The record gives the reactivity of an RNA of 177 nucleotides to 2A3. Values cover nucleotides 27 to 126. 2A3 adducts were read by reverse transcription with SuperScript II with manganese. The RNA was probed in 150 mM KOAc, 10 mM MgCl2 and 150 mM bicine (pH 8.5) at 24 C.
RNA sequence: GGGAACGACUCGAGUAGAGUCGAAAACGUGGCAUCGCCAAUGUGCCGCUGCCGGUCGGCCGGGGUAUGGGUCCGGAUCGCAUGACGAUCUACGUGCAGAUGCCUGACACGCUGGCGCUGAACACUAGCAUGUGCGACCGUUCGCGGUCGCACAUGCAAAAGAAACAACAACAACAAC
Reactivity to 2A3 in 0.01 (KOAc 150mM, MgCl2 10mM, bicine 150mM(pH8.5), 24C), signal-to-noise 1, nucleotides 027 to 126: c110g060u030g000g000c000a000u070c140g000c040c020a070a020u170g060u170g030c030c120g000c130u030g010c140c000g000g300u300c140g020g000c000c000g000g000g000g000u130a090u060g190g000g000u010c000c020g010g000a000u000c000g000c030a120u070g100a240c000g000a000u060c020u180a060c040g110u140g100c030a000g000a080u020g070c000c070u000g030a030c000a000c210g120c040u000g000g070c000g020c040u020g000a230a000c060a010c130u000a040